[RMDB]
Chemical mapping of a 177-nucleotide RNA with DMS and 2A3.
Reactivities are given for positions 27 through 126.
For DMS the reverse transcriptase was MarathonRT.
High 2A3 reactivity points to a flexible backbone, as in loops and unpaired stretches.
RNA sequence: GGGAACGACUCGAGUAGAGUCGAAAACAUCAGGAGGACCUUCCGCGCACUUCCAAGCAGGAGCUUUCCUUCCAUGCGCACUUCCAAUCUACUCGAGAGGAGGAGGAGGAGGAGGAUUCCCACAAAAUUACGAGUAAUGGUUCGCCAUUACUCGUAAAAAAGAAACAACAACAACAAC
Reactivity to DMS in 0.01 (KOAc 150mM, MgCl2 10mM, bicine 150mM(pH8.5), 24C), signal-to-noise 2, nucleotides 027 to 126: c070a030u000c140a080g000g030a060g010g000a090c300c040u000u010c000c090g000c030g010c040a120c090u010u010c050c110a120a110g010c040a100g000g000a090g010c150u000u000u000c010c020u000u010c010c090a050u000g000c050g010c100a120c090u010u010c020c010a100a200u000c000u000a050c060u000c030g020a010g010a210g000g000a100g000g000a060g020g000a040g000g010a090g010g000a080g000g020a090u000u000c010c000c000a070c220a020a080a090a070
Reactivity to 2A3 in 0.01 (KOAc 150mM, MgCl2 10mM, bicine 150mM(pH8.5), 24C), signal-to-noise 1, nucleotides 027 to 126: c000a060u090c070a030g020g010a000g030g010a050c010c050u020u090c000c050g040c010g000c060a100c060u300u040c090c030a080a020g050c040a040g010g080a020g000c040u120u110u120c010c010u080u000c070c010a050u080g020c040g010c030a050c050u000u010c010c000a020a060u010c000u020a020c020u030c040g020a010g020a040g060g010a040g030g020a040g000g050a050g000g000a020g040g000a010g010g020a060u040u020c000c040c020a030c050a020a070a000a010